Chemical mapping of a 177-nucleotide RNA with 2A3 and DMS. It was measured as part of the RMDB library OK1LIB. For DMS, 1,049 sequencing reads were counted. Values cover nucleotides 27 to 126. Reactivities are rounded to 0.1 and cut off at 0 and 3.
RNA sequence: GGGAACGACUCGAGUAGAGUCGAAAAGUAACUUGUCAGCGACCGUCGGACUAAGUAUAAGACGUAACUGCUCACAGAGUUGGUGAGAAAGGGUGUGAACUGCUGCUGUUUGCUCCUGCCAAAGUUCUCAACCGGCUGGAUUCGUCCAGCCGGUUGAAAAAGAAACAACAACAACAAC
Reactivity to 2A3 in 0.01 (KOAc 150mM, MgCl2 10mM, bicine 150mM(pH8.5), 24C), signal-to-noise 1, nucleotides 027 to 126: g000u040a030a000c000u290u100g090u060c080a240g170c020g020a000c000c000g010u010c000g000g120a040c070u100a050a040g070u030a100u000a130a010g000a000c030g000u000a050a050c070u040g030c000u000c000a000c060a000g070a120g090u190u220g000g000u010g010a010g110a120a000a000g000g060g000u070g030u000g000a130a000c000u060g030c010u010g050c040u000g070u000u080u040g030c000u000c000c000u030g200c020c000a040a060a000g040u040u000c050
Reactivity to DMS in 0.01 (KOAc 150mM, MgCl2 10mM, bicine 150mM(pH8.5), 24C), signal-to-noise 1, nucleotides 027 to 126: g000u020a020a210c000u000u010g030u000c080a060g000c000g050a090c060c000g060u000c010g000g000a210c090u080a060a050g000u000a030u000a140a110g000a010c020g000u000a030a030c000u010g000c080u000c170a240c030a100g000a080g040u000u010g000g000u000g040a030g030a100a050a210g030g000g000u000g020u000g000a050a090c000u070g000c040u000g000c070u000g060u000u000u000g020c000u000c000c000u200g000c110c080a030a030a280g000u000u000c000